[RMDB]
RNA sequence: GGGAACGACUCGAGUAGAGUCGAAAAUACAGGGGCGUGGUCAGAAAUAGUUCUAGGUUUAGUGCCCCAACUAGCUAGAUCAAACAGAUAACUAUUGUGACCCUUAGUUUUUAAGUAACGGUCAAAGACACACACUCAGGUUCGCCUGAGUGUGUGUAAAAGAAACAACAACAACAAC
Reactivity to DMS in 0.01 (KOAc 150mM, MgCl2 10mM, bicine 150mM(pH8.5), 24C), signal-to-noise 1, nucleotides 027 to 126: u010a130c150a120g000g000g020g000c050g050u000g000g010u020c000a090g000a210a040a050u000a000g030u000u020c010u000a040g010g020u010u000u000a050g000u020g010c060c000c060c070a080a080c030u000a000g020c000u000a080g010a030u000c040a070a160a210c300a130g000a050u000a050a020c030u010a010u000u010g000u000g010a010c000c000c220u000u000a050g000u000u000u020u020u020a020a060g010u010a070a070c150g000g000u000c040a100a070a050g000
This 177-nucleotide RNA was probed chemically with DMS. For DMS, 795 sequencing reads were counted. Values are in units of 0.01, from 0 to 300, in steps of 10. For DMS the reverse transcriptase was MarathonRT.